[RMDB]
RNA sequence: GGGAACGACUCGAGUAGAGUCGAAAAACGUCGCCGCUCGCCGCUCCGCCCGGAUGCCGCCGGCUCGUCACGGACUCGCGCGUAACCCUCCUCCGCUUCAUCGGUUACGCACAAGCUGUUCGACCCACUGUGUGUAUCAAUUCGUUGAUACACACAGAAAAGAAACAACAACAACAAC
Reactivity to DMS in 0.01 (KOAc 150mM, MgCl2 10mM, bicine 150mM(pH8.5), 24C), signal-to-noise 6, nucleotides 027 to 126: a070c060g000u000c060g010c030c010g010c060u000c060g010c050c050g010c040u020c030c050g000c080c060c060g000g000a060u010g000c070c060g020c090c020g010g000c030u000c030g020u010c060a100c060g000g000a060c040u000c070g010c070g010c020g010u010a010a040c020c010c130u010c050c030u010c030c030g000c080u010u010c090a090u010c150g000g010u000u010a010c020g020c020a080c090a050a080g010c070u000g000u000u000c020g000a200c000c020c020a220
Reactivity to 2A3 in 0.01 (KOAc 150mM, MgCl2 10mM, bicine 150mM(pH8.5), 24C), signal-to-noise 9, nucleotides 027 to 126: a000c040g030u030c040g010c030c000g020c030u030c030g040c020c000g010c020u020c010c020g040c010c020c000g030g010a070u100g030c010c010g020c010c010g030g010c010u010c020g040u020c010a030c040g030g010a050c010u020c050g040c000g000c000g030u020a030a040c010c010c010u060c010c020u060c020c020g060c060u150u090c040a120u100c030g020g000u010u020a010c010g020c010a010c010a030a040g020c040u030g020u040u030c030g040a080c010c010c010a030
Structure probing data (DMS and 2A3) for a 177-nucleotide construct. 2A3 is a SHAPE reagent: it acylates the 2'-hydroxyl of flexible nucleotides of all four kinds.